[RMDB]
RNA sequence: GGGAACGACUCGAGUAGAGUCGAAAAGAUAUGGAUUCAAAUAGCUUUUGACGCUUCAAGGAUCGGAAACGAUCCGAAGAGCGAUAAGCUAUUGAAUCCUAAGUCAAAAGGCGAGUUCGCUCGCCAAGUUGGUAUGAGUGUUCGCACUCAUACCAACAAAAGAAACAACAACAACAAC
Reactivity to DMS in 0.01 (KOAc 150mM, MgCl2 10mM, bicine 150mM(pH8.5), 24C), signal-to-noise 2, nucleotides 027 to 126: g020a010u020a300u010g010g020a000u000u000c000a000a010a120u000a000g020c000u000u030u000u010g030a200c080g010c000u000u020c000a060a300g000g000a010u010c000g020g000a050a130a210c020g000a000u000c010c000g020a190a250g010a030g040c000g010a110u000a020a000g000c010u000a000u000u000g000a000a000u000c000c000u010a010a060g040u010c030a110a090a150a120g000g010c000g000a000g030u000u030c300g020c000u000c010g000c030c000a000a040
Reactivity to 2A3 in 0.01 (KOAc 150mM, MgCl2 10mM, bicine 150mM(pH8.5), 24C), signal-to-noise 2, nucleotides 027 to 126: g010a000u080a010u220g010g000a010u010u020c020a080a140a250u030a020g000c000u090u060u170u250g270a150c070g000c010u040u000c060a070a080g000g010a000u010c020g020g000a090a050a030c020g010a020u000c020c020g000a040a020g000a010g000c010g010a010u030a030a010g020c010u010a010u010u000g010a000a000u000c000c000u000a100a010g090u050c050a100a070a090a060g030g000c000g020a000g000u090u080c200g180c130u000c000g030c030c000a010a010